[RMDB]
An RNA of 177 nucleotides, treated with 2A3 and read out base by base.
Reactivities are rounded to 0.1 and cut off at 0 and 3.
RNA sequence: GGGAACGACUCGAGUAGAGUCGAAAAGGGGGUGUGGCCUUGCUCUUCAGAGAGGGCAGAUCUACUUAGGGAGAUCUCUUGGGGAAGAAAAGUGGUAGGCACGACAGUUCCUCACCCUUCUGAGAUGGCCCAGUCGACAGUUCGCUGUCGACUGGGCAAAAGAAACAACAACAACAAC
Reactivity to 2A3 in 0.01 (KOAc 150mM, MgCl2 10mM, bicine 150mM(pH8.5), 24C), signal-to-noise 1, nucleotides 027 to 126: g010g010g000g000g000u060g060u090g020g000c000c000u040u130g110c000u000c000u210u140c090a010g080a000g010a020g020g000g000c000a000g020a010u000c000u000a000c020u120u290a040g140g000g000a020g000a000u000c020u000c010u040u100g010g100g000g020a070a030g090a090a080a000a040g000u090g000g250u210a120g040g260c000a000c000g070a040c010a050g180u000u000c000c000u000c050a020c000c000c000u040u000c050u000g040a000g000a000u050g090

The reactions ran in a buffer of 150 mM KOAc, 10 mM MgCl2 and 150 mM bicine (pH 8.5), at 24 C.